The record gives the reactivity of an RNA of 177 nucleotides to DMS and 2A3. Source: RMDB library OK2TRN, as collected in RNAgym. DMS adducts were read by reverse transcription with MarathonRT. Reactivities are given for positions 27 through 126. 2A3 adducts were read by reverse transcription with SuperScript II with manganese. The 2A3 profile rests on 3,536 reads.

RNA sequence: GGGAACGACUCGAGUAGAGUCGAAAAACGCAGCCCACCUGGAAGAACUGGCGCAUGUAUGACUACAUCACCAAGGAGCUGCCGUCAGUGCUGGAAAAGUUUGAGGAACUGGACCUCAGCAAUGCGGCGAAUGCACGAAAUUCGUUUCGUGCAUUCGAAAAGAAACAACAACAACAAC
Reactivity to DMS in 0.01 (KOAc 150mM, MgCl2 10mM, bicine 150mM(pH8.5), 24C), signal-to-noise 4, nucleotides 027 to 126: a110c110g030c020a080g010c020c020c040a110c100c040u000g000g010a130a080g000a120a110c070u010g010g020c030g010c120a040u000g010u000a050u010g040a150c140u000a030c010a060u000c040a050c040c030a050a060g000g010a110g000c040u010g020c010c020g020u000c050a050g020u000g010c020u000g010g000a030a160a130a050g000u000u000u000g000a110g020g010a090a060c070u000g020g000a300c120c020u000c020a020g000c040a040a050u000g010c060g000g020
Reactivity to 2A3 in 0.01 (KOAc 150mM, MgCl2 10mM, bicine 150mM(pH8.5), 24C), signal-to-noise 3, nucleotides 027 to 126: a000c020g000c000a010g020c000c020c000a030c010c050u040g050g040a110a070g040a160a040c060u040g020g020c030g000c060a040u080g030u060a060u140g080a050c050u060a030c080a070u080c030a020c060c010a060a080g070g000a100g050c030u040g000c030c010g040u010c010a020g010u000g030c000u010g020g030a020a030a070a030g030u080u150u160g180a130g050g020a050a020c020u060g010g080a040c000c020u040c000a000g000c020a010a070u040g020c000g000g000